[RMDB]
Description: The record gives the reactivity of an RNA of 177 nucleotides to 2A3 and DMS. It was measured as part of the RMDB library OK2TST. DMS adducts were read by reverse transcription with MarathonRT.

RNA sequence: GGGAACGACUCGAGUAGAGUCGAAAACGCACUCGGCGAUGGCUACCUCAGAACUCUCGGAGAGGUCGCGCAAAAAGAAAUGCUCUAGGCCGUAAAUGAGAAACUGGUGUCGGUAGGCGCCUACGGCAACAAUGCUGAUUUUCGAAUCAGCAUUGUUAAAAGAAACAACAACAACAAC
Reactivity to 2A3 in 0.01 (KOAc 150mM, MgCl2 10mM, bicine 150mM(pH8.5), 24C), signal-to-noise 3, nucleotides 027 to 126: c030g010c010a050c030u060c030g050g000c020g040a070u040g120g000c020u030a050c030c000u020c020a060g030a220a130c030u020c010u040c130g070g000a110g010a010g040g050u010c010g000c000g000c040a000a090a020a060a010g150a040a140a040u110g030c000u000c030u080a060g070g000c000c010g020u050a050a080a070u180g030a060g060a050a120a050c100u070g010g010u070g040u100c040g060g100u130a070g040g000c000g010c010c010u020a030c020g040g020c020
Reactivity to DMS in 0.01 (KOAc 150mM, MgCl2 10mM, bicine 150mM(pH8.5), 24C), signal-to-noise 6, nucleotides 027 to 126: c100g030c070a080c080u000c130g020g020c050g000a080u000g010g010c020u000a060c050c020u000c050a070g000a090a080c140u000c040u000c050g010g020a210g010a100g010g020u000c060g010c180g010c080a040a060a070a110a080g010a080a070a090u010g020c020u010c060u000a110g010g000c000c010g000u000a040a060a100u010g000a070g010a060a110a130c160u000g010g010u000g020u010c030g000g020u000a060g010g000c010g010c020c010u000a030c090g010g010c040
2A3 adducts were read by reverse transcription with SuperScript II with manganese.